[RMDB]
RNA sequence: GGGAACGACUCGAGUAGAGUCGAAAAUUCGGGCCAGAUAUGUAUUUUACUCCCGAGGCUCCACUUAUGCAAAAUUCAUGUCUGUUCAGUUCUGCACCAGUAUCGACAACAACCGAUUAUUCGUGUAAGUGGAUUUAUGAUUCGUCAUAAAUCCACUAAAAGAAACAACAACAACAAC
Reactivity to 2A3 in 0.01 (KOAc 150mM, MgCl2 10mM, bicine 150mM(pH8.5), 24C), signal-to-noise 1, nucleotides 027 to 126: u050u060c040g010g030g040c070c000a010g040a120u070a010u090g100u040a060u020u180u030u120a100c050u110c000c000c000g030a030g040g000c020u010c070c000a020c000u200u220a190u260g110c060a030a120a120a090u040u080c000a030u060g060u040c010u040g120u080u000c030a080g030u060u100c010u020g000c000a070c010c040a000g020u060a030u090c030g090a040c020a150a000c000a040a020c050c000g040a020u160u060a080u170u110c090g020u080g020u100a110
Reactivity to DMS in 0.01 (KOAc 150mM, MgCl2 10mM, bicine 150mM(pH8.5), 24C), signal-to-noise 3, nucleotides 027 to 126: u010u000c060g030g010g030c110c060a050g010a040u000a040u020g000u010a020u010u000u000u000a090c090u010c060c020c010g000a110g000g020c040u020c030c030a070c080u000u010a060u000g010c070a060a020a050a030u000u000c040a020u000g000u010c020u000g000u010u010c070a110g020u000u010c030u000g010c040a050c020c040a050g020u010a050u010c050g020a050c070a050a080c150a070a110c080c020g000a040u000u000a160u010u010c140g000u000g030u000a070
This 177-nucleotide RNA was probed chemically with 2A3 and DMS. For DMS, 2,356 sequencing reads were counted. For 2A3, 519 sequencing reads were counted.